[RMDB]
RNA sequence: GGGAACGACUCGAGUAGAGUCGAAAAUGAACAAGUUGACGUUUCUCAUGAGACUUCUGACGACGAGUGGGCUGCUGCAGUUGAUGAAGCGUUCCCUCUCGAUGAAGCAGAAGAUGUUACUGAAUCUCUUAGCUAAGCAGUUCGCUGCUUAGCUAAGAAAAGAAACAACAACAACAAC
Reactivity to 2A3 in 0.01 (KOAc 150mM, MgCl2 10mM, bicine 150mM(pH8.5), 24C), signal-to-noise 1, nucleotides 027 to 126: u130g020a080a000c060a130a070g010u060u050g010a020c030g000u000u040u030c030u000c030a070u080g000a020g010a060c000u000u000c010u030g080a070c010g000a000c000g000a020g000u000g000g000g030c040u040g000c000u010g000c000a060g010u220u170g170a180u060g030a060a000g040c000g060u100u110c000c000c000u000c000u000c020g040a080u060g060a060a020g000c000a000g000a000a000g040a060u110g040u050u060a060c080u050g030a030a030u010c010u000